[RMDB]
Structure probing data (2A3) for a 207-nucleotide construct. The RNA was probed in 150 mM KOAc, 10 mM MgCl2 and 150 mM bicine (pH 8.5) at 24 C. The data come from the RNA Mapping Database (RMDB), library OK3TST.
RNA sequence: GGGAACGACUCGAGUAGAGUCGAAAAACGCAACUGGGCUGAUAUGCGUACGCGAAGGAGAAACGAUCAGGGACGCUGUAGACUUCGGCGCGCGCGUGUGCUGUUGCGUGCAGGAACUGCGGUUGGACAGUAUCGGAGAUAACCUCUUCCUGCCGUAGGUUCGUAGAUGAUUCGUCAUCUACGAACCAAAAGAAACAACAACAACAAC
Reactivity to 2A3 in 0.01 (KOAc 150mM, MgCl2 10mM, bicine 150mM(pH8.5), 24C), signal-to-noise 2, nucleotides 027 to 156: a000c010g000c000a010a000c060u170g000g100g060c030u110g060a040u020a010u260g000c010g000u020a040c040g000c000g030a010a000g050g080a030g040a070a150a060c070g030a190u290c030a030g040g050g130a030c080g010c120u050g000u010a000g060a100c010u010u000c070g050g000c040g010c010g030c000g000c010g000u050g000u010g050c020u050g000u000u010g000c000g000u010g050c020a040g050g030a040a030c010u070g000c010g020g000u060u080g050g000a030c000a090g090u090a190u130c130g030g030a070g010a050u130a030a090c000c010u020c000u020u000c000c020u000g010c000c010g080u080a060